[RMDB]
RNA sequence: GGGAACGACUCGAGUAGAGUCGAAAAUAAUUCGUUUUCUUGAGAGGUCAGCCUUGUUCACAUUCUGGAAAGAAUAUAAGUUGUAAGAGUCCAGUCAAACUUGCAAUUUCUUCAGAAGACAGAUUACAAUUAAAUUUUGCCUGCUUUAUAGAAUAGACGUACAAGUUAGAUUCGUCUAACUUGUACGAAAAGAAACAACAACAACAAC
Reactivity to 2A3 in 0.01 (KOAc 150mM, MgCl2 10mM, bicine 150mM(pH8.5), 24C), signal-to-noise 4, nucleotides 027 to 156: u120a000a050u070u060c020g000u050u080u020u030c010u070u100g060a080g010a040g030g050u080c050a030g020c010c010u050u040g020u080u060c080a050c020a090u040u000c010u030g030g060a120a060a040g050a110a020u160a030u040a130a080g040u060u050g030u010a050a000g020a030g090u030c090c030a010g030u040c060a040a050a070c010u010u010g000c000a020a040u030u030u020c020u020u020c020a010g010a050a000g010a020c020a020g090a050u060u100a040c030a030a040u080u120a180a080a090u060u140u070u080g020c000c000u030g030c040u120u140u040a100u030a020g070a090a060u080a080g050a020
Reactivity to DMS in 0.01 (KOAc 150mM, MgCl2 10mM, bicine 150mM(pH8.5), 24C), signal-to-noise 2, nucleotides 027 to 156: u010a060a070u010u000c050g000u000u000u000u000c040u000u010g010a090g010a100g020g010u020c080a100g010c080c040u000u000g020u000u010c050a080c070a160u010u000c020u000g030g050a100a080a040g010a110a100u000a110u010a040a110g030u000u000g020u000a090a130g000a170g010u000c030c010a120g000u010c070a050a050a100c030u000u000g010c040a070a070u000u010u000c020u010u000c180a050g020a050a020g020a030c010a040g000a050u000u000a050c030a070a110u000u000a050a060a140u010u000u000u000g020c010c020u000g010c020u010u000u020a050u010a110g000a070a100u000a150g000a240
This 207-nucleotide RNA was probed chemically with 2A3 and DMS. It was measured as part of the RMDB library OK3TST. For DMS the reverse transcriptase was MarathonRT. High DMS reactivity at an A or C suggests that its Watson-Crick edge is free.